Source: RMDB library OK3TST, as collected in RNAgym. An RNA of 207 nucleotides, treated with 2A3 and DMS and read out base by base. High DMS reactivity at an A or C suggests that its Watson-Crick edge is free. 2A3 adducts were read by reverse transcription with SuperScript II with manganese. Conditions: 150 mM KOAc, 10 mM MgCl2 and 150 mM bicine (pH 8.5), 24 C. For DMS the reverse transcriptase was MarathonRT.

RNA sequence: GGGAACGACUCGAGUAGAGUCGAAAAGAAGUUCGUCGAUAUUGGGGGAAGCUUGACCUACCAUGUUAAAGCCGGCGAUGUGAACUGCCAUGUUUGCAAUCCCGUGCUGGAUGUAAAGGAUAUGAAGCGGAGAAUCUCGGAGAUGCUAUACAUGACAAUAUAGUGCGGAGUUCGCUCCGCACUAUAUAAAAGAAACAACAACAACAAC
Reactivity to 2A3 in 0.01 (KOAc 150mM, MgCl2 10mM, bicine 150mM(pH8.5), 24C), signal-to-noise 1, nucleotides 027 to 156: g090a000a000g010u050u060c020g070u080c070g030a030u040a030u140u100g060g000g000g000g000a020a050g010c030u100u070g030a080c000c010u030a080c010c010a090u100g020u110u110a120a000a020g010c050c000g030g030c080g040a000u020g030u000g010a000a000c010u070g240c230c000a070u190g020u040u000u000g010c030a090a240u010c000c010c010g000u050g010c020u030g000g010a000u000g010u000a120a150a080g000g000a000u010a010u140g000a040a010g030c070g120g020a070g030a030a100u040c020u080c120g010g000a030g000a000u040g000c030u030a020u020a070c080a140u070g080a030c020a000
Reactivity to DMS in 0.01 (KOAc 150mM, MgCl2 10mM, bicine 150mM(pH8.5), 24C), signal-to-noise 2, nucleotides 027 to 156: g020a110a120g000u010u000c020g020u000c040g030a160u010a070u000u020g000g010g000g040g030a110a070g000c040u010u000g010a150c030c020u010a160c040c020a100u010g020u010u000a050a100a080g010c100c090g020g040c120g000a080u000g000u010g010a050a040c050u000g000c100c080a100u010g030u010u000u000g040c010a100a140u000c040c020c040g040u000g040c060u010g000g000a050u010g000u000a060a040a130g020g010a120u010a060u020g020a030a110g010c000g010g020a100g020a110a090u020c030u000c040g000g000a120g000a130u000g000c000u000a100u000a070c080a070u010g010a050c090a120